[RMDB]
RNA sequence: GGGAACGACUCGAGUAGAGUCGAAAAAUCGCCCUCGACCGUGUCGUGGCGCUCGUGGCCGACGCGGAUCUUCUGGUCGUGCUCGAUGUUCUCGUCCCAGUCGCGCUGGGCGUGGACGAAGAUCUGAGUCCACUCCCCGAUUCGUCGGGGAGUGGACAAAAGAAACAACAACAACAAC
Reactivity to DMS in 0.01 (KOAc 150mM, MgCl2 10mM, bicine 150mM(pH8.5), 24C), signal-to-noise 2, nucleotides 027 to 126: a070u020c050g010c040c020c000u010c110g010a100c010c020g020u000g000u000c080g010u020g010g040c040g000c110u010c130g010u010g010g000c060c040g020a010c020g000c000g020g010a090u000c060u020u000c080u010g020g020u000c000g030u000g030c050u000c010g010a070u000g010u000u000c010u000c010g000u010c030c010c010a050g040u010c190g040c230g020c020u000g000g000g010c050g000u000g000g020a020c010g000a120a090g010a060u000c050u000g000a250
Reactivity to 2A3 in 0.01 (KOAc 150mM, MgCl2 10mM, bicine 150mM(pH8.5), 24C), signal-to-noise 2, nucleotides 027 to 126: a050u080c030g010c000c020c020u010c040g060a010c010c010g030u030g000u030c090g120u110g060g030c110g040c050u130c130g210u290g050g040c030c010g000a010c020g000c020g000g020a020u010c040u130u010c030u050g000g010u010c020g070u040g020c010u020c040g080a110u170g020u040u000c010u040c000g170u260c010c000c010a020g040u060c070g030c050g010c140u030g020g000g050c000g030u040g040g000a010c030g040a020a000g060a100u030c040u060g030a000